The record gives the reactivity of an RNA of 177 nucleotides to 2A3. Values cover nucleotides 27 to 126.
RNA sequence: GGGAACGACUCGAGUAGAGUCGAAAACAAGGCGACAUGCCCUCGUCGAGAAUGGCUCAGCUCUAUGCUGGAAAUCUCCAGUGUUUACAUUGCGAAAACAAUUGAAAUCAUAACAAUAAAAUCAAAUCCCUGAUAGGGUAUUCGUACCCUAUCAGGGAAAAGAAACAACAACAACAAC
Reactivity to 2A3 in 0.01 (KOAc 150mM, MgCl2 10mM, bicine 150mM(pH8.5), 24C), signal-to-noise 4, nucleotides 027 to 126: c080a020a040g040g000c000g060a080c030a060u140g040c010c000c000u010c050g060u010c040g010a010g040a120a130u130g020g010c020u000c070a020g000c030u040c030u040a030u140g020c000u020g000g070a060a120a140u080c080u000c040c000a030g000u020g070u050u080u030a070c040a100u070u130g060c030g110a060a020a110a000c030a050a060u120u190g080a070a040a020u190c080a050u150a140a080c010a190a010u150a160a090a050a040u100c030a050a060a070u000